RNA sequence: GGGAACGACUCGAGUAGAGUCGAAAACAACUUGAACGCUUAGCUAUCAAUUUCAACGCAAUCAACUAAACCAUUGAAAUGCUAACGUUGAAACUAACUGAACUAAUUAUUCUUAGUGAAAUUUUGACCAGGUCGAUUUAUUCGUAAAUCGACCUGGAAAAGAAACAACAACAACAAC
Reactivity to 2A3 in 0.01 (KOAc 150mM, MgCl2 10mM, bicine 150mM(pH8.5), 24C), signal-to-noise 2, nucleotides 027 to 126: c020a020a070c050u090u230g070a000a030c010g060c090u000u010a020g020c000u010a030u060c000a000a100u000u030u070c130a070a030c120g000c110a010a160u130c050a000a100c070u230a120a030a070c040c010a010u010u070g020a020a020a030u220g000c030u030a030a000c020g010u000u000g000a060a050a000c020u020a040a000c130u150g020a040a000c000u000a080a140u100u120a070u130u110c060u040u070a030g000u000g030a090a070a050u080u090u020u040g040a030